[RMDB]
RNA sequence: GGGAACGACUCGAGUAGAGUCGAAAAUUUGUGAUGCUAAUAUGGUCUUGUCAAUGUUUAGGGGCAAAGGCCUGAUUAUGCAGAUGCUUGGUGUAAGCUUAUGCUUGUACAACUUUUGCUAUUGGCCCGUGAGGGCGUAAUUCGUUACGCCCUCACGAAAAGAAACAACAACAACAAC
Reactivity to DMS in 0.01 (KOAc 150mM, MgCl2 10mM, bicine 150mM(pH8.5), 24C), signal-to-noise 4, nucleotides 027 to 126: u010u020u000g020u010g010a140u010g010c040u000a040a060u010a080u010g010g030u000c010u000u010g010u000c000a050a090u000g010u030u020u040a120g010g000g000g010c020a020a040a060g010g010c000c000u000g010a100u010u010a050u020g010c000a020g000a040u000g000c150u000u000g000g010u010g010u000a010a030g010c000u010u030a110u020g010c010u000u000g000u010a030c020a040a040c030u000u010u010u010g010c020u000a160u010u000g000g010c020c180
Reactivity to 2A3 in 0.01 (KOAc 150mM, MgCl2 10mM, bicine 150mM(pH8.5), 24C), signal-to-noise 7, nucleotides 027 to 126: u090u060u120g120u060g050a100u060g010c010u010a030a020u040a090u130g010g000u000c000u010u010g010u030c030a100a180u050g100u140u250u210a150g070g010g000g010c060a120a060a040g010g010c020c000u010g000a010u020u080a040u210g010c010a000g010a030u040g020c130u020u040g100g020u040g070u020a010a010g010c020u200u200a130u300g000c000u020u020g010u020a010c010a010a020c020u010u020u030u010g000c010u020a040u090u110g030g000c000c010
An RNA of 177 nucleotides, treated with DMS and 2A3 and read out base by base. For DMS the reverse transcriptase was MarathonRT. It was measured as part of the RMDB libraries RFM100 and RFMREP.